This 207-nucleotide RNA was probed chemically with DMS and 2A3.
Reactivities are given for positions 27 through 156.
Conditions: 150 mM KOAc, 10 mM MgCl2 and 150 mM bicine (pH 8.5), 24 C.
For 2A3 the reverse transcriptase was SuperScript II with manganese.
Reactivities are rounded to 0.1 and cut off at 0 and 3.
RNA sequence: GGGAACGACUCGAGUAGAGUCGAAAAAUACAUUUAUGUCUCCUGAAGUUGCUGGCGAGCUCUCUGAAAAGCUUAAGCGCCAUGUUAAACCUACAGCAUACGCUUACCACGUUGUGGAUGAGGCAUGCUUAGUUGAUGAUUUUGUCAAUUUAAAAUACAACAGAAUUGAAUUCGUUCAAUUCUGUUGAAAAGAAACAACAACAACAAC
Reactivity to DMS in 0.01 (KOAc 150mM, MgCl2 10mM, bicine 150mM(pH8.5), 24C), signal-to-noise 2, nucleotides 027 to 156: a100u010a100c070a090u000u000u010a100u030g010u000c050u000c010c030u010g010a100a260g000u000u000g000c010u010g010g000c010g000a090g030c000u000c010u010c040u010g000a150a100a060a050g010c020u020u000a040a140g010c030g020c030c050a020u020g020u010u000a040a150a120c050c010u010a100c090a120g040c030a070u000a040c020g010c020u000u000a140c070c060a040c030g030u000u000g030u000g010g020a060u000g000a150g010g010c000a050u010g010c030u000u010a090g010u000u010g000a060u000g000a160u000u000u000u010g030u000c020a060a100u000u000u010a040a060a060a100u010a210
Reactivity to 2A3 in 0.01 (KOAc 150mM, MgCl2 10mM, bicine 150mM(pH8.5), 24C), signal-to-noise 2, nucleotides 027 to 156: a000u130a000c050a000u090u170u270a170u180g020u030c020u020c020c010u070g080a150a060g060u080u040g060c020u030g040g000c040g010a030g000c030u000c000u000c000u120g060a080a140a010a010g040c000u010u050a110a000g040c020g000c010c010a020u090g020u070u130a080a130a060c030c020u020a020c060a060g000c000a010u030a070c060g000c010u000u050a010c010c000a080c120g300u110u250g040u080g020g080a080u070g130a010g050g000c010a020u010g000c000u070u040a050g010u040u020g000a050u020g040a090u050u110u030u110g010u010c000a000a040u000u130u220a070a150a040a050u140a010